[RMDB]
Chemical mapping of a 177-nucleotide RNA with DMS and 2A3. For 2A3 the reverse transcriptase was SuperScript II with manganese. For DMS the reverse transcriptase was MarathonRT.
RNA sequence: GGGAACGACUCGAGUAGAGUCGAAAAGACACGACGGAGACGUCGUGUCAAGUCCAGUGCGAAAGCACUGGACAAAUAAGGGCUGUUUUGCUCGCUGAGUUUCAGCCCCAAACAAAAAAAAUCAGCAGUAAAUUUAGCUAUUCGUAGCUAAAUUUACAAAAGAAACAACAACAACAAC
Reactivity to DMS in 0.01 (KOAc 150mM, MgCl2 10mM, bicine 150mM(pH8.5), 24C), signal-to-noise 2, nucleotides 027 to 126: g010a000c000a000c000g010a040c010g000g020a280g000a280c020g030u000c010g030u000g010u000c000a040a110g010u000c000c010a000g010u000g010c000g000a210a110a140g000c000a020c000u000g000g000a000c000a000a030a090u020a080a170g010g000g010c000u010g000u000u000u000u000g020c060u010c150g000c010u000g010a040g010u000u000u000c000a000g000c010c000c000c150a020a010a120c060a000a000a000a010a010a000a110a120u000c020a010g010c020a190
Reactivity to 2A3 in 0.01 (KOAc 150mM, MgCl2 10mM, bicine 150mM(pH8.5), 24C), signal-to-noise 1, nucleotides 027 to 126: g000a000c000a000c000g020a000c000g030g000a070g020a050c010g000u010c000g000u000g000u000c000a000a000g010u020c010c000a010g000u000g010c020g090a140a030a040g020c010a000c000u010g000g000a000c010a000a040a000u130a050a080g010g000g000c010u000g020u010u000u010u030g030c040u050c100g020c000u000g000a030g010u010u000u010c000a000g010c010c000c010c020a040a050a010c040a020a000a000a000a000a000a010a100u010c000a000g000c010a000